Source: RMDB library OK2TRN, as collected in RNAgym.
This 177-nucleotide RNA was probed chemically with DMS.
For DMS the reverse transcriptase was MarathonRT.
Reactivities are given for positions 27 through 126.

RNA sequence: GGGAACGACUCGAGUAGAGUCGAAAAUAGUAGAGACAGAGUUUUAUCAUGUUGGCCAGGCUUGUCUCAAACUCCUGCCCUCAAGUGAUUCUCCUACCUGAGCCUCCCAGAGUGCUGGGAUUACAGGCACGCAGUCCGUAUUCGUACGGACUGCGUGAAAAGAAACAACAACAACAAC
Reactivity to DMS in 0.01 (KOAc 150mM, MgCl2 10mM, bicine 150mM(pH8.5), 24C), signal-to-noise 1, nucleotides 027 to 126: u000a040g000u000a060g000a080g020a050c030a040g010a060g040u000u000u000u000a120u010c050a050u020g000u010u000g000g020c090c060a090g000g000c130u010u010g010u010c010u010c030a050a050a060c050u000c050c020u000g020c080c100c020u020c070a060a070g010u020g010a160u020u000c070u000c010c020u000a060c060c020u000g010a050g000c170c060u010c000c000c020a030g020a190g010u010g010c010u000g020g000g000a120u000u000a110c100a080g000g000